[RMDB]
RNA sequence: GGGAACGACUCGAGUAGAGUCGAAAAUCUUUUCCUUUGCUCGUCUUCCCCGGUCAGCCUCCCGAGUUCCUCUUCUUCUUCCCUGCUGAGGUUCUUCCCUCCGGCGGCCAGUUGCUUCUUCUUGUUCGUGCGGCUCAGUUCGCUGAGCCGAAAAGAAACAACAACAACAAC
Reactivity to DMS in 0.01 (KOAc 150mM, MgCl2 10mM, bicine 150mM(pH8.5), 24C), signal-to-noise 5, nucleotides 027 to 129: u030c040u010u040u020u000c030c000u000u050u020g020c040u010c100g040u020c080u010u000c030c030c020c120g060g040u010c080a100g000c070c020u000c070c010c030g030a170g010u030u000c060c030u030c060u070u010c010u030u000c060u040u000c000c020c020u030g030c060u040g040a190g050g000u020u010c060u050u010c040c030c000u030c040c050g020g040c080g000g000c080c080a080g040u010u030g010c050u000u000c000u000u000c030u000u000g030u050u000c040g020u020g050
Reactivity to 2A3 in 0.01 (KOAc 150mM, MgCl2 10mM, bicine 150mM(pH8.5), 24C), signal-to-noise 2, nucleotides 027 to 129: u120c020u040u080u030u040c000c000u010u020u070g020c000u030c010g030u000c000u000u000c000c000c000c000g000g000u070c050a010g000c010c000u030c000c000c000g030a040g000u010u010c000c000u000c000u070u000c000u030u020c010u030u020c010c000c010u040g040c000u060g050a000g000g050u010u040c020u060u070c010c000c000u040c000c040g020g000c000g000g020c010c020a010g010u050u070g020c050u020u020c000u040u000c010u010u060g040u070u020c030g040u060g080
Source: RMDB library 15KLIB, as collected in RNAgym. An RNA of 170 nucleotides, treated with DMS and 2A3 and read out base by base. The DMS profile rests on 14,585 reads. The RNA was probed in 150 mM KOAc, 10 mM MgCl2 and 150 mM bicine (pH 8.5) at 24 C.